RNA sequence: GGGAACGACUCGAGUAGAGUCGAAAAAAAAAGAUAUGGAUGUAGAGGACGAAGAACGACCACUACCCACCCUAUUCGGAAACGAAUAGGAGGUGGUCGGGAGUCCGAUACAUCCUAAGUCAAAAAACAAUAGUCUAUACUUCGGUAUAGACUAUUGAAAAGAAACAACAACAACAAC
Reactivity to DMS in 0.01 (KOAc 150mM, MgCl2 10mM, bicine 150mM(pH8.5), 24C), signal-to-noise 3, nucleotides 027 to 126: a060a080a050a120a100g000a010u010a140u010g010g010a020u000g010u010a000g010a300g000g000a030c000g010a060a160g020a200a180c000g000a010c000c000a020c010u000a050c030c000c030a300c220c000c000u000a000u000u000c010g000g000a020a030a040c000g010a010a000u000a000g000g010a020g030g020u010g020g000u000c010g000g010g000a020g010u000c000c010g000a230u000a000c000a000u000c000c000u000a000a070g000u010c010a000a060a040a080a070a130
Reactivity to 2A3 in 0.01 (KOAc 150mM, MgCl2 10mM, bicine 150mM(pH8.5), 24C), signal-to-noise 1, nucleotides 027 to 126: a000a000a000a010a000g100a040u100a050u200g000g000a020u010g010u040a000g030a070g030g020a000c010g160a300a080g000a000a000c000g000a010c040c020a010c090u300a150c040c010c030a060c010c000c000u010a000u010u010c020g010g000a040a010a010c010g000a020a020u000a000g030g010a000g000g030u030g010g000u000c020g000g010g010a000g000u000c000c030g000a000u000a010c010a000u030c010c000u000a000a000g050u040c040a080a060a070a050a040a080